The record gives the reactivity of an RNA of 177 nucleotides to DMS and 2A3.
The reactions ran in a buffer of 150 mM KOAc, 10 mM MgCl2 and 150 mM bicine (pH 8.5), at 24 C.
2A3 adducts were read by reverse transcription with SuperScript II with manganese.
The data come from the RNA Mapping Database (RMDB), library M2PK50.
Reactivities are given for positions 27 through 126.
For DMS, 2,053 sequencing reads were counted.
RNA sequence: GGGAACGACUCGAGUAGAGUCGAAAAGGUCGGUGUUUCGACACCGACCACUUACCGAGAAUGUUCCUCGGUAUAUAAAACAAACCCUUGGAAUCAAGGGAAUACGAAUCGUGUUCGCACGAUUCAAUGUGAAACACAGUUUCGACUGUGUUUCACAAAAAGAAACAACAACAACAAC
Reactivity to DMS in 0.01 (KOAc 150mM, MgCl2 10mM, bicine 150mM(pH8.5), 24C), signal-to-noise 2, nucleotides 027 to 126: g010g010u000c000g020g020u000g000u010u000u010c200g020a010c000a020c000c000g010a000c010c000a020c130u000u000a020c000c010g000a020g000a130a170u000g000u020u020c060c000u000c030g010g000u000a020u000a040u010a030a010a040a060c190a130a100a150c000c000c000u000u000g010g010a170a130u010c000a000a000g000g000g000a030a010u010a100c250g010a000a010u000c000g010u000g020u000u000c220g010c000a020c000g010a010u000u000c000a040a110
Reactivity to 2A3 in 0.01 (KOAc 150mM, MgCl2 10mM, bicine 150mM(pH8.5), 24C), signal-to-noise 2, nucleotides 027 to 126: g030g000u010c010g000g010u020g050u020u070u130c200g040a000c000a010c000c000g000a000c000c000a000c020u000u000a000c000c020g000a000g000a090a230u220g030u060u130c010c000u000c000g000g030u010a020u010a020u020a090a090a020a010c060a060a130a120c010c010c000u000u000g080g090a220a120u300c010a010a010g000g000g000a030a010u080a050c050g000a000a000u000c000g010u000g030u020u050c250g000c070a020c000g000a010u000u020c010a000a040